[RMDB]
RNA sequence: GGGAACGACUCGAGUAGAGUCGAAAAUUGCUAUUCGUAGCAAGCCACGAUAUGGAUGCUGUGGAGUAGGGAGUGUAAGGAUUCGGAAACGAAUCUGAUGCACAUCGAUCUACUCGUAACAUCAGCAUCCUAAGUCCUAGACAGAGUUCGCUCUGAAAAGCAAUAGUUCUUUCGAGAACUAUUGCUUAAAAGAAACAACAACAACAAC
Reactivity to DMS in 0.01 (KOAc 150mM, MgCl2 10mM, bicine 150mM(pH8.5), 24C), signal-to-noise 3, nucleotides 027 to 156: u000u000g000c010u000a050u000u000c170g030u000a010g000c020a050a080g020c030c030a110c070g020a060u010a190u010g010g000a030u000g020c020u000g010u000g000g000a020g010u000a030g010g000g000a060g030u000g000u000a200a300g010g000a020u000u000c010g000g000a100a040a160c030g030a020a000u000c000u000g000a090u000g020c000a020c000a180u010c160g020a050u000c000u000a020c010u010c000g010u010a030a080c140a090u010c010a010g000c010a040u000c000c000u000a030a060g000u000c010c040u020a180g010a220c040a070g000a080g010u000u000c070g010c170u010c030u000g000a160a150
Reactivity to 2A3 in 0.01 (KOAc 150mM, MgCl2 10mM, bicine 150mM(pH8.5), 24C), signal-to-noise 4, nucleotides 027 to 156: u020u000g000c000u010a030u080u120c300g150u040a020g010c000a020a000g080c020c030a130c090g010a010u020a030u150g000g000a000u000g000c000u010g010u020g080g010a000g000u000a000g010g010g000a040g000u000g000u010a040a010g020g000a000u000u000c000g020g020a020a020a030c000g010a000a000u000c010u000g030a050u300g020c020a000c020a050u300c040g020a040u000c000u010a010c000u010c010g020u060a050a060c040a210u230c010a020g000c000a000u000c000c000u000a000a000g000u000c000c020u080a130g060a070c030a020g060a030g060u150u200c170g100c060u040c020u050g100a210a190